RNA sequence: GGGAACGACUCGAGUAGAGUCGAAAAGUCAGGGAAAGGGGAUGGGCAAGCAUUAGGACAAAUAGCCAGUGCAUGUGGGGCUGAAAAUCUAGGUGAUGGGUUGAUAGGUGCAGCAAACCACAUGGCACACGUUUACCUAUGUAACAAACCUGCACGAUAUUUAUUAAUGGUUCGCCAUUAAUAAAUAAAAAGAAACAACAACAACAAC
Reactivity to 2A3 in 0.01 (KOAc 150mM, MgCl2 10mM, bicine 150mM(pH8.5), 24C), signal-to-noise 2, nucleotides 027 to 156: g050u040c030a020g020g030g020a110a210a080g040g010g010g040a090u110g050g000g010c080a080a010g010c000a040u060u160a080g000g030a120c070a050a070a050u070a060g060c060c030a020g020u010g010c000a000u000g020u000g000g000g030g000c000u020g030a230a030a000a000u040c010u010a040g030g020u080g110a120u160g030g030g040u040u020g020a040u020a080g030g030u040g000c000a000g000c000a030a170a030c020c010a010c010a060u040g110g030c020a010c000a020c030g020u010u030u050a020c000c000u040a020u070g040u040a060a020c070a120a100a010c020c050u030g040c080a000c040g000a000

Structure probing data (2A3) for a 207-nucleotide construct.
The 2A3 profile rests on 1,044 reads.
It was measured as part of the RMDB library OK3TST.